[RMDB]
RNA sequence: GGGAACGACUCGAGUAGAGUCGAAAAGCGCUCCUGAACGUGACUUCAGAAGACGGGCGCCGACAUGUUAGAAUGUCAAGGCGACAGUGUAGUGACACUGGGUAAUCUAACUUACCAAUCGCCGGCGCGUUGAGUCACGUCAACAACCGUCGAGCGAAAUCAUCAUGGGGUUCGCCCCAUGAUGAUUAAAAGAAACAACAACAACAAC
Reactivity to 2A3 in 0.01 (KOAc 150mM, MgCl2 10mM, bicine 150mM(pH8.5), 24C), signal-to-noise 3, nucleotides 027 to 156: g050c030g000c030u030c030c020u070g020a060a010c040g010u010g010a000c010u140u100c270a130g050a260a030g060a090c030g010g020g070c000g010c010c040g040a000c000a000u020g070u110u230a110g060a300a000u000g010u010c020a030a060g030g000c010g000a010c000a010g010u000g010u060a270g060u170g150a010c010a000c010u030g070g000g000u010a020a010u100c170u130a080a100c030u010u010a000c010c000a030a020u050c010g020c030c000g020g000c000g010c030g030u040u040g000a000g000u000c000a010c010g020u000c010a030a090c020a050a110c040c010g030u090c040g030a020g050c020g020a050
Reactivity to DMS in 0.01 (KOAc 150mM, MgCl2 10mM, bicine 150mM(pH8.5), 24C), signal-to-noise 1, nucleotides 027 to 156: g030c010g030c010u010c020c030u010g020a070a000c000g000u000g000a010c000u020u000c030a190g010a200a140g030a150c070g010g000g010c010g030c000c010g020a040c020a060u010g000u000u000a090g020a020a060u000g050u000c040a080a110g030g010c000g010a080c030a010g040u000g000u000a220g000u010g000a270c010a040c010u000g000g010g060u000a050a120u010c060u010a030a090c120u020u000a120c100c020a120a120u000c120g070c000c000g030g000c010g080c080g010u010u000g020a090g000u000c020a030c000g030u010c030a010a080c000a060a120c020c030g010u000c060g030a110g010c050g010a100
Source: RMDB library OK3TST, as collected in RNAgym. Structure probing data (2A3 and DMS) for a 207-nucleotide construct. For DMS the reverse transcriptase was MarathonRT.